This 207-nucleotide RNA was probed chemically with DMS and 2A3. The DMS profile rests on 2,124 reads. DMS adducts were read by reverse transcription with MarathonRT.
[RMDB]
RNA sequence: GGGAACGACUCGAGUAGAGUCGAAAACUUUAAACCCGCCUCGGACAUGGUUGGGUUAAUUGAGACCAAUCUAAGUCGGAUAUUAAAAAGGGGCACUAACGACGGCCGGAUUCUUAACACAGCAAUCUCGUUUUCAGAUAAGACGAAUCAAUUCGUCAUGCGAUCAAUAUUUCGAUAUUGAUCGCAUAAAAGAAACAACAACAACAAC
Reactivity to DMS in 0.01 (KOAc 150mM, MgCl2 10mM, bicine 150mM(pH8.5), 24C), signal-to-noise 1, nucleotides 027 to 156: c020u000u010u000a070a090a040c030c000c000g000c040c010u000c020g010g000a170c080a160u000g030g000u000u000g080g020g010u000u010a030a090u000u000g020a300g050a080c010c010a060a090u000c040u000a050a090g020u000c010g040g010a100u010a110u000u000a070a060a030a070a110g000g000g000g000c000a100c070u000a030a070c010g000a120c030g030g020c030c070g000g030a250u000u010c080u010u000a060a090c040a130c070a070g000c060a060a030u010c000u000c060g000u000u000u000u000c030a130g030a150u000a120a150g030a020c020g010a010a060u000c110a080a160u000u000c000g020u000c040
Reactivity to 2A3 in 0.01 (KOAc 150mM, MgCl2 10mM, bicine 150mM(pH8.5), 24C), signal-to-noise 3, nucleotides 027 to 156: c020u110u100u160a060a080a050c010c010c010g000c020c000u000c030g110g050a030c010a040u070g000g020u040u210g040g010g000u030u050a050a010u100u080g070a030g040a040c010c000a000a010u010c020u070a100a040g030u000c000g030g040a070u050a140u190u300a090a080a020a010a050g020g010g010g000c040a010c050u070a070a040c020g060a010c010g010g010c000c000g040g000a030u090u000c020u060u110a130a040c060a000c010a070g070c030a050a030u030c020u030c080g030u030u030u110u080c090a030g010a130u130a170a000g030a000c020g000a000a010u140c100a070a240u090u010c010g000u000c020
Reactivities are rounded to 0.1 and cut off at 0 and 3.